Chemical mapping of a 177-nucleotide RNA with DMS and 2A3.
For DMS the reverse transcriptase was MarathonRT.
RNA sequence: GGGAACGACUCGAGUAGAGUCGAAAAAAGUGUGUAUCAACAAUGGAUAUUGAAUAAGUCCCUGUAGCUUGUACACACCGCCCGUCACUAUCUCAGAUGUUUUUCAGGAUGAAGAGUCCAGGCUCUGCUUGGCUCUAAAGUUCGCUUUAGAGCCAAGAAAAGAAACAACAACAACAAC
Reactivity to DMS in 0.01 (KOAc 150mM, MgCl2 10mM, bicine 150mM(pH8.5), 24C), signal-to-noise 2, nucleotides 027 to 126: a050a060g000u000g020u020g010u010a000u020c060a000a010c030a120a080u000g000g000a070u010a070u000u000g030a140a140u000a100a160g000u000c030c000c090u000g010u000a120g030c210u010u000g020u010a030c000a000c010a020c030c060g020c020c010c040g020u010c180a110c100u010a020u000c050u000c020a020g000a050u010g000u020u000u000u000u020c090a090g010g010a050u010g020a090a060g000a150g000u010c020c010a120g000g000c020u000c070u000g000
Reactivity to 2A3 in 0.01 (KOAc 150mM, MgCl2 10mM, bicine 150mM(pH8.5), 24C), signal-to-noise 2, nucleotides 027 to 126: a000a010g030u030g000u000g000u020a000u280c040a020a000c010a040a080u060g030g000a040u070a100u230u190g120a120a170u230a300a040g020u000c010c000c000u020g130u000a040g010c080u010u060g000u020a000c020a000c020a000c010c010g000c030c000c010g070u100c020a060c090u210a200u130c040u000c040a010g010a050u070g120u010u070u000u180u090c030a070g020g000a030u030g050a090a050g140a020g110u000c000c020a010g000g010c000u000c000u050g050